Description: Chemical mapping of a 207-nucleotide RNA with 2A3. Conditions: 150 mM KOAc, 10 mM MgCl2 and 150 mM bicine (pH 8.5), 24 C. The data come from the RNA Mapping Database (RMDB), library OK3TST. The 2A3 profile rests on 1,233 reads.
[RMDB]
RNA sequence: GGGAACGACUCGAGUAGAGUCGAAAACGUGCCUUUAAGCAGUUGCUUGACGACUUUGUGGCGUUGGAAAGCGAACUGGAAGACUAUAAGAACGCUUUAACUGAACUCCUAGAGCAACUUAUCCCUUUGCUUAUCCGUAGAUACAUGGAGAGCAAGGGCCACGGGAUGAAUUCGUUCAUCCCGUGGCAAAAGAAACAACAACAACAAC
Reactivity to 2A3 in 0.01 (KOAc 150mM, MgCl2 10mM, bicine 150mM(pH8.5), 24C), signal-to-noise 3, nucleotides 027 to 156: c060g020u040g040c010c010u130u080u110a130a060g030c020a000g010u020u020g010c010u020u030g040a040c050g060a100c080u130u140u180g070u130g040g050c010g000u010u020g030g030a050a010a010g000c010g010a030a060c010u030g090g100a080a080g080a050c130u090a110u050a280a070g030a060a000c010g000c000u050u000u060a120a070c020u050g070a020a020c000u010c010c010u000a010g000a000g050c030a000a000c020u030u030a060u080c000c000c000u020u100u100g010c010u020u070a150u160c000c010g030u040a080g050a190u100a100c080a020u100g000g000a000g000a000g000c000a000a000g000g000